[RMDB]
RNA sequence: GGGAACGACUCGAGUAGAGUCGAAAACUGAGUCUCAUAUCACAUCAUAUCUACGUUGCUUUUUCAGCACUCAUGAUUCGUUGACGACAGACACAAGAGACAUUUCUGCAACGACUGUCAGCCGCGAAUUUAAAGAAGACAUAAUUGCAGCAUUAAGUCAGUCUUCUUAGUUCGCUAAGAAGACUGAAAAAGAAACAACAACAACAAC
Reactivity to DMS in 0.01 (KOAc 150mM, MgCl2 10mM, bicine 150mM(pH8.5), 24C), signal-to-noise 2, nucleotides 027 to 156: c070u010g000a140g020u000c000u020c040a190u000a070u010c070a120c060a130u000c050a070u000a130u030c030u000a090c170g050u000u000g030c020u030u000u000u000u000c060a090g000c030a050c080u030c150a170u010g000a060u000u000c060g070u010u000g030a080c000g030a080c050a050g010a100c130a170c070a040a080g000a190g000a090c070a100u000u000u000c000u030g000c040a070a030c030g030a210c120u010g020u000c020a120g070c010c080g000c040g030a150a060u000u000u000a030a060a090g030a090a070g000a090c050a040u000a100a130u000u010g010c000a040g030c100a140u000u010a040a190g000
Reactivity to 2A3 in 0.01 (KOAc 150mM, MgCl2 10mM, bicine 150mM(pH8.5), 24C), signal-to-noise 6, nucleotides 027 to 156: c050u060g030a000g080u010c020u020c060a080u070a080u210c100a070c030a130u140c010a030u070a080u140c080u130a070c110g090u080u050g010c030u050u100u040u100u200c040a020g010c020a020c030u040c030a050u090g040a030u060u050c020g030u060u110g040a070c020g010a010c010a020g040a020c020a000c040a210a040g060a000g040a080c030a100u120u180u020c020u030g040c010a040a070c060g050a070c030u000g010u020c030a040g040c030c020g030c010g030a030a030u060u110u160a180a090a020g110a050a010g020a010c030a050u110a040a060u090u050g000c000a010g030c010a030u140u140a090a040g070

This 207-nucleotide RNA was probed chemically with DMS and 2A3. The RNA was probed in 150 mM KOAc, 10 mM MgCl2 and 150 mM bicine (pH 8.5) at 24 C. For 2A3, 3,599 sequencing reads were counted. Values cover nucleotides 27 to 156.